Structure probing data (2A3) for a 207-nucleotide construct. Reactivities are rounded to 0.1 and cut off at 0 and 3. The 2A3 profile rests on 575 reads. 2A3 is a SHAPE reagent: it acylates the 2'-hydroxyl of flexible nucleotides of all four kinds. Source: RMDB library M2RFPK, as collected in RNAgym. The RNA was probed in 150 mM KOAc, 10 mM MgCl2 and 150 mM bicine (pH 8.5) at 24 C.
RNA sequence: GGGAACGACUCGAGUAGAGUCGAAAAAACAAACAUCAAAUCGCAUAGCAAAGAGUCAAAAAAAUAGAGAGCUUUGCGAGACCUACCAAGGGUGAAGAGAUACCAUCCAAGGAGCAGAAGAGAAAUCGAGAGCUCACGGCGUUCGCGCCGUGAGCAAGCAAUAGGGAAGGUUCGCCUUCCCUAUUGCAAAAGAAACAACAACAACAAC
Reactivity to 2A3 in 0.01 (KOAc 150mM, MgCl2 10mM, bicine 150mM(pH8.5), 24C), signal-to-noise 1, nucleotides 027 to 156: a000a000c090a040a050a010c050a130u130c020a000a110a080u030c000g000c020a000u040a010g030c030a050a100a070g050a050g110u230c200a200a170a060a060a000a050a030u300a040g150a000g000a020g000c010u010u010u010g000c000g000a000g020a020c010c010u020a000c050c030a070a040g060g010g020u030g040a070a060g060a000g050a040u090a160c000c030a000u000c010c050a020a070g000g010a030g060c040a030g040a160a030g050a010g050a020a170a000u100c070g010a070g000a000g170c000u000c000a000c000g000g060c030g020u050u060c150g000c000g000c000c000g000u020g000a000g000c010a000a000